The record gives the reactivity of an RNA of 177 nucleotides to 2A3.
RNA sequence: GGGAACGACUCGAGUAGAGUCGAAAAUGAUAAGUUUUUAAUAAACCAUCUAAAUUGCCUCGAAUAAUAUCAUUUAACUUUCUACUACCUAAACUGCCGCCCAUAACAAGUAACACUUUUUUGUCAUCCAAGAUGUUGGGUUCGCCCAACAUCUUGGAAAAGAAACAACAACAACAAC
Reactivity to 2A3 in 0.01 (KOAc 150mM, MgCl2 10mM, bicine 150mM(pH8.5), 24C), signal-to-noise 1, nucleotides 027 to 126: u000g080a000u000a070a070g020u030u040u060u060u110a210a100u040a070a130a040c010c010a010u000c020u010a120a100a100u140u030g000c000c010u030c020g000a010a010u030a200a150u050a030u000c090a000u000u000u110a030a040c000u100u150u000c000u000a010c010u000a020c030c010u000a030a070a140c000u030g000c000c000g040c000c000c000a030u000a040a010c080a090a000g040u040a070a000c030a160c050u010u030u000u130u060u060g260u270c000a010u000

Conditions: 150 mM KOAc, 10 mM MgCl2 and 150 mM bicine (pH 8.5), 24 C.